[RMDB]
RNA sequence: GGGAACGACUCGAGUAGAGUCGAAAACGAAUCGUCCCCGCAUGGCAGAGACCGAGCCCCCUUCGGAAAAGGACCGGAGGAGGGAGCUAGGAGCGUGGGGGGGCCGGUGGAGCCAUGGGAUGCUCCUUACUGUAGUACAGUUCGCUGUACUACAGUAAAAAGAAACAACAACAACAAC
Reactivity to 2A3 in 0.01 (KOAc 150mM, MgCl2 10mM, bicine 150mM(pH8.5), 24C), signal-to-noise 2, nucleotides 027 to 126: c020g030a020a100u030c010g010u010c020c010c020c030g170c020a020u050g080g000c030a010g020a010g020a180c010c000g000a020g000c000c000c000c000c000u000u030c020g020g020a060a050a080a130g100g060a040c000c030g030g020a070g040g030a150g010g010g010a020g010c000u030a030g000g040a080g020c040g020u070g040g000g000g000g000g010g020c030c000g050g000u030g000g030a000g000c000c060a040u110g060g000g030a040u070g010c030u030c010c000u000
Reactivity to DMS in 0.01 (KOAc 150mM, MgCl2 10mM, bicine 150mM(pH8.5), 24C), signal-to-noise 2, nucleotides 027 to 126: c050g000a120a050u010c040g000u000c000c000c000c080g080c050a010u000g030g030c010a060g000a300g010a100c010c000g000a190g000c000c000c000c010c000u000u030c020g010g010a060a080a150a170g020g000a050c050c040g020g000a060g010g010a060g000g000g010a040g010c030u000a080g000g020a190g050c040g030u010g020g010g020g000g030g000g030c050c000g040g010u000g000g000a300g030c000c030a110u020g020g020g030a200u010g010c020u000c030c010u000